[RMDB]
RNA sequence: GGGAACGACUCGAGUAGAGUCGAAAAAGAGCCGGAUACGUCCGGCUCAACGGGGGAUACGUGUGGUGCCGUCCGCUCCCCCUAUGGCAUAACAAAUGCACCUCACACUAGGCUACGGCCUAGUGAAAAAAUCCCUACAUGUUCGCAUGUAGGGAAACAUGGUAUGGUUGUUCGCAACCAUACCAUGAAAAGAAACAACAACAACAAC
Reactivity to 2A3 in 0.01 (KOAc 150mM, MgCl2 10mM, bicine 150mM(pH8.5), 24C), signal-to-noise 1, nucleotides 027 to 156: a000g000a000g030c000c000g020g000a000u010a030c100g080u030c000c050g000g000c000u000c000a000a000c010g000g000g000g000g010a000u020a080c030g010u010g010u030g050g010u010g050c040c050g020u000c040c050g060c040u020c000c000c030c000c000u020a120u140g080g000c090a080u060a260a070c040a130a060a020u080g000c000a010c000c000u030c000a040c000a000c000u010a000g000g000c000u000a000c150g100g000c030c000u000a000g000u000g000a070a000a000a000a000a000u020c000c000c000u010a000c000a000u000g020u010u030c110g000c110a000u000g000u000a000g000g020g020a000a000a000